Structure probing data (DMS and 2A3) for a 177-nucleotide construct. Conditions: 150 mM KOAc, 10 mM MgCl2 and 150 mM bicine (pH 8.5), 24 C. Reactivities are given for positions 27 through 126.

RNA sequence: GGGAACGACUCGAGUAGAGUCGAAAAGCGCUGGCUAUGUGUGGGGCGACUUGCUGUCAAGAGUAAAGUUGGUGCCUUUGUGAUGGGCAGCUUAUUUGGGGUAACUUUUUCCAUGUUAUAAAGGCAGGGAUAAUAUAAUUUUCGAAUUAUAUUAUCCAAAAGAAACAACAACAACAAC
Reactivity to DMS in 0.01 (KOAc 150mM, MgCl2 10mM, bicine 150mM(pH8.5), 24C), signal-to-noise 4, nucleotides 027 to 126: g000c080g010c020u020g000g010c080u020a040u020g000u000g020u010g030g000g010g010c030g000a040c060u020u010g010c020u000g010u010c090a060a100g010a130g020u000a040a060a060g010u000u000g000g000u010g020c040c010u020u000u020g020u000g010a050u000g010g010g010c070a040g000c050u020u020a050u000u010u030g000g000g000g000u020a020a060c070u000u000u000u010u000c020c020a060u010g000u020u020a080u040a040a030a050g000g010c050a090g000
Reactivity to 2A3 in 0.01 (KOAc 150mM, MgCl2 10mM, bicine 150mM(pH8.5), 24C), signal-to-noise 2, nucleotides 027 to 126: g030c030g010c030u020g020g000c010u030a030u070g090u000g020u020g000g020g000g010c030g020a040c000u020u040g000c000u000g010u020c030a040a000g050a020g050u100a080a040a000g010u030u000g050g040u020g010c010c000u000u030u070g010u010g020a020u020g000g000g000c000a000g000c010u050u030a100u040u050u060g000g000g000g000u010a000a030c020u080u020u000u000u000c000c020a010u030g040u030u050a120u030a030a010a020g040g000c000a000g020
For DMS the reverse transcriptase was MarathonRT. Reactivities are rounded to 0.1 and cut off at 0 and 3. For DMS, 8,833 sequencing reads were counted.